The data come from the RNA Mapping Database (RMDB), libraries RFM100 and RFMREP.
An RNA of 177 nucleotides, treated with DMS and 2A3 and read out base by base.
Values cover nucleotides 27 to 126.
The reactions ran in a buffer of 150 mM KOAc, 10 mM MgCl2 and 150 mM bicine (pH 8.5), at 24 C.
[RMDB]
RNA sequence: GGGAACGACUCGAGUAGAGUCGAAAAAGCUCGUGAGUACGCUCACGAGCAAAGUAAAGGAACAUCAGUCCUGGGGUUGGGAUGAAAGAGGAUCGACUCCCCAAAGUGAGGGAGGGACGUUUCCAAAUAGAAAAGGUAAGUUCGCUUACCUUUUCUAAAAAGAAACAACAACAACAAC
Reactivity to DMS in 0.01 (KOAc 150mM, MgCl2 10mM, bicine 150mM(pH8.5), 24C), signal-to-noise 7, nucleotides 027 to 126: a110g010c000u000c000g030u010g000a020g020u010a080c260g020c010u000c000a010c000g010a010g020c010a010a010a070g010u020a060a160a060g000g010a080a070c080a080u030c140a100g010u010c000c020u000g000g010g000g000u020u020g000g000g000a100u010g000a050a050a070g010a070g010g010a070u020c080g000a100c020u000c000c000c010c020a070a080a100g010u020g010a110g010g010g010a070g000g000g000a080c120g010u000u000u000c000c000a030a090a190
Reactivity to 2A3 in 0.01 (KOAc 150mM, MgCl2 10mM, bicine 150mM(pH8.5), 24C), signal-to-noise 5, nucleotides 027 to 126: a000g000c000u010c010g000u000g000a000g020u050a070c220g030c070u010c000a000c010g020a000g010c000a000a010a000g020u070a010a030a020g020g000a090a040c020a130u090c050a040g090u010c000c010u020g040g000g000g050u170u180g050g010g020a050u080g120a070a050a030g070a030g050g010a040u060c040g070a070c010u040c000c000c000c050a080a230a030g160u200g070a180g010g030g040a120g010g000g000a010c050g010u000u000u000c010c000a010a030a000